[RMDB]
Description
Structure probing data (DMS and 2A3) for a 177-nucleotide construct. The data come from the RNA Mapping Database (RMDB), library OK2TST. The DMS profile rests on 2,848 reads. The reactions ran in a buffer of 150 mM KOAc, 10 mM MgCl2 and 150 mM bicine (pH 8.5), at 24 C. 2A3 adducts were read by reverse transcription with SuperScript II with manganese.
RNA sequence: GGGAACGACUCGAGUAGAGUCGAAAAUGGGCUUUAUUUCCCUCGGCUGCCCCAAGGCCCUGGUGGACUCCGAGCGGAUUCUGACGCAGCUGCGGGCCGAAGGCUAUGAGGUGGCCCCGAGCUACGAGAAUCAUCAGAUGUUCGCAUCUGAUGAUUCAAAAGAAACAACAACAACAAC
Reactivity to DMS in 0.01 (KOAc 150mM, MgCl2 10mM, bicine 150mM(pH8.5), 24C), signal-to-noise 3, nucleotides 027 to 126: u000g000g010g020c030u000u000u000a120u000u000u000c030c010c000u000c050g010g020c090u000g030c010c000c000c070a100a300g010g000c010c000c020u000g000g000u000g010g000a080c030u000c020c030g010a080g020c090g020g000a070u000u000c110u000g000a160c110g020c060a120g010c040u000g010c140g010g000g010c030c040g000a170a140g000g000c030u010a150u000g000a050g000g020u000g010g000c020c040c080c100g000a020g000c020u010a050c110g000a180
Reactivity to 2A3 in 0.01 (KOAc 150mM, MgCl2 10mM, bicine 150mM(pH8.5), 24C), signal-to-noise 3, nucleotides 027 to 126: u030g040g000g020c020u090u150u140a100u120u200u110c000c000c000u000c020g020g020c070u060g040c020c010c010c000a070a080g030g010c000c000c040u100g030g060u140g050g040a070c020u000c050c030g060a070g010c100g060g060a060u140u040c060u160g090a030c060g010c100a050g020c030u100g040c090g030g020g000c000c000g000a030a000g010g000c020u030a070u080g030a030g050g010u040g020g020c000c000c000c020g070a030g000c000u070a080c040g090a070